[RMDB]
RNA sequence: GGGAACGACUCGAGUAGAGUCGAAAAAUAGCACCAACUGCUAUACCUAUUAUAUAUCCAAAUAAGUUAUCUACUAGAGGCCAUGCCCAUAUAGCUGACUCUGGGAACCAUUGAAUUGCUCCUAGAAGAUCGUCGCAUGAUUCGUCAUGCGACGAUCAAAAGAAACAACAACAACAAC
Reactivity to 2A3 in 0.01 (KOAc 150mM, MgCl2 10mM, bicine 150mM(pH8.5), 24C), signal-to-noise 1, nucleotides 027 to 126: a010u000a000g000c000a000c150c000a240a300c150u080g000c000u000a000u030a030c000c000u000a050u160u120a030u120a030u090a030u120c060c030a000a030a080u230a180a000g000u040u000a080u260c000u000a050c050u120a050g000a110g080g080c050c050a190u150g000c000c010c000a140u220a030u040a000g000c010u030g050a040c000u000c000u170g010g000g030a110a010c110c110a180u050u140g010a010a030u030u000g000c050u010c000c000u000a000g000a000a000